[RMDB]
RNA sequence: GGGAACGACUCGAGUAGAGUCGAAAACUGCCCCAAUCUAAAGAUUCCAAUUUUUUAAACGAGUCCGGGGUUCUAUUGUAAAUGCCCGAAUAGAACCCUGUUCAAGUGGUUUGUCCACUGAUGUCGUGUAGCUGUAGGUUCGCCUACAGCAAAAGAAACAACAACAACAAC
Reactivity to DMS in 0.01 (KOAc 150mM, MgCl2 10mM, bicine 150mM(pH8.5), 24C), signal-to-noise 6, nucleotides 027 to 129: c070u030g000c010c000c010c030a120a070u020c060u030a040a050a050g020a030u020u020c070c070a000a010u020u020u020u040u040u040a000a160a050c040g020a090g030u000c070c030g000g010g000g010u000u000c000u020a030u010u020g000u010a070a100a080u040g030c060c050c060g060a050a010u050a000g020a000a000c000c020c030u010g000u040u050c130a040a010g020u000g020g010u020u030u020g030u060c000c000a020c020u020g010a020u000g020u000c020g030u000g010u010a090
Reactivity to 2A3 in 0.01 (KOAc 150mM, MgCl2 10mM, bicine 150mM(pH8.5), 24C), signal-to-noise 2, nucleotides 027 to 129: c050u100g010c000c000c000c000a010a050u040c040u210a120a100a050g060a100u100u070c040c020a040a030u050u030u020u080u130u260a140a170a010c020g000a020g030u020c030c000g010g000g000g000u000u000c000u000a020u010u050g130u160a120a150a100u210g090c010c040c060g050a010a000u000a000g000a000a000c000c000c000u000g000u020u030c040a020a010g000u000g050g080u060u150u260g130u040c000c000a000c000u010g020a020u060g110u070c010g010u040g060u080a020